[RMDB]
RNA sequence: GGGAACGACUCGAGUAGAGUCGAAAAACACGCGAGAAUGGAUGCCGCGCACGAGUUUAUGCGCUUGUUCGGGUUCUGCCCGAAAGGGAAGACUUGAUUUCCCGUUAGUUCAACCACCGGGUGAUCGUGCUUUACUCGUUUUCGAACGAGUAAAGCAAAAAGAAACAACAACAACAAC
Reactivity to DMS in 0.01 (KOAc 150mM, MgCl2 10mM, bicine 150mM(pH8.5), 24C), signal-to-noise 3, nucleotides 027 to 126: a040c070a090c090g010c020g020a070g000a080a060u020g000g030a050u000g000c040c050g000c070g000c030a080c060g010a090g020u000u000u020a100u030g020c000g020c050u000u030g040u000u010c030g020g020g000u010u090c180u010g010c010c000c000g010a030a070a050g000g000g000a050a050g030a090c100u040u020g000a130u010u000u000c000c000c010g030u010u040a080g000u040u030c120a120a140c090c050a120c090c030g000g010g000u000g000a030u020c080g010
Reactivity to 2A3 in 0.01 (KOAc 150mM, MgCl2 10mM, bicine 150mM(pH8.5), 24C), signal-to-noise 2, nucleotides 027 to 126: a000c010a000c020g040c020g050a050g080a190a090u070g060g050a030u090g020c020c020g050c000g030c020a030c030g040a030g050u040u080u070a130u100g010c050g000c000u050u100g050u030u030c010g030g000g000u090u060c100u190g030c000c000c010g010a040a030a010g070g000g000a080a010g050a090c060u150u150g050a060u110u040u000c000c000c000g000u050u110a070g010u040u080c020a050a040c020c010a030c000c020g040g000g000u000g010a030u030c060g040